[RMDB]
The data come from the RNA Mapping Database (RMDB), library VIROID. This 177-nucleotide RNA was probed chemically with DMS and 2A3. The DMS profile rests on 5,090 reads.
RNA sequence: GGGAACGACUCGAGUAGAGUCGAAAACUUCCUUUCGCUGCUGGCUCCACAUCCGAUCGUCGCUGAGGCCUGCGCGCCCCUCGCCCGGAGCUUCUCUCUGGCUACUACCCGGUGGAUACAACUGAAGCUAUGAGAGUAAGUUCGCUUACUCUCAUAGAAAAGAAACAACAACAACAAC
Reactivity to DMS in 0.01 (KOAc 150mM, MgCl2 10mM, bicine 150mM(pH8.5), 24C), signal-to-noise 4, nucleotides 027 to 126: c300u000u000c010c010u000u010u000c070g030c040u000g010c030u000g010g000c010u000c040c050a050c070a080u010c060c040g010a110u000c100g010u000c070g020c070u010g000a090g010g010c020c030u000g000c050g020c070g000c020c010c000c020u000c050g000c090c020c040g020g000a080g020c060u010u000c040u000c010u000c030u000g020g010c020u000a050c040u000a110c030c020c010g010g030u000g000g010a100u000a070c090a040a050c070u000g010a090a060g010
Reactivity to 2A3 in 0.01 (KOAc 150mM, MgCl2 10mM, bicine 150mM(pH8.5), 24C), signal-to-noise 2, nucleotides 027 to 126: c010u060u040c000c000u040u080u140c060g000c070u140g020c020u040g040g000c040u010c030c030a060c020a090u020c030c020g120a150u080c040g100u030c050g040c090u060g030a020g050g040c000c030u050g020c060g000c000g010c020c010c010c000u010c000g040c000c000c000g040g010a000g010c020u110u000c030u000c000u010c010u020g040g020c010u020a030c000u040a040c010c000c020g050g010u020g060g040a050u050a140c040a080a030c090u090g030a030a000g040

The RNA was probed in 150 mM KOAc, 10 mM MgCl2 and 150 mM bicine (pH 8.5) at 24 C. For DMS the reverse transcriptase was MarathonRT. 2A3 adducts were read by reverse transcription with SuperScript II with manganese.